An RNA of 177 nucleotides, treated with 2A3 and DMS and read out base by base. The DMS profile rests on 2,730 reads. The reactions ran in a buffer of 150 mM KOAc, 10 mM MgCl2 and 150 mM bicine (pH 8.5), at 24 C.
RNA sequence: GGGAACGACUCGAGUAGAGUCGAAAAUGGGAGAUAUCCCUGAAGCGACUGGCUCAAGGGACGGGUCGACAAACAAAAACAACAAGCCCGAAAUCAUAAUAAAAACAAAGCACGCACCUACUUGGGGCUACCUUCGCAUAUUCGUAUGCGAAGGUAGAAAAGAAACAACAACAACAAC
Reactivity to 2A3 in 0.01 (KOAc 150mM, MgCl2 10mM, bicine 150mM(pH8.5), 24C), signal-to-noise 5, nucleotides 027 to 126: u040g040g010g010a060g030a050u060a090u100c000c000c000u010g020a050a050g040c020g170a190c090u100g120g000c010u000c080a140a130g040g000g050a020c000g000g010g020u040c000g040a010c010a000a110a030c050a000a080a110a000a040c140a040a000c030a040a040g020c010c000c010g060a060a040a060u080c060a010u060a180a020u100a080a150a060a010a000c120a060a070a020g050c010a010c090g000c000a030c020c000u110a090c020u040u050g020g020g030g010
Reactivity to DMS in 0.01 (KOAc 150mM, MgCl2 10mM, bicine 150mM(pH8.5), 24C), signal-to-noise 3, nucleotides 027 to 126: u000g000g000g000a010g000a100u070a060u000c010c000c000u000g040a300a160g000c030g000a030c010u010g010g020c010u000c030a070a250g030g010g060a090c120g000g000g000u000c030g030a020c150a080a090a110c070a000a130a070a050a070c100a150a040c060a090a140g000c000c000c000g010a070a160a040u000c020a090u030a030a120u040a000a070a050a090a100c130a130a080a150g070c090a060c050g000c050a070c030c000u010a050c050u000u020g000g000g000g000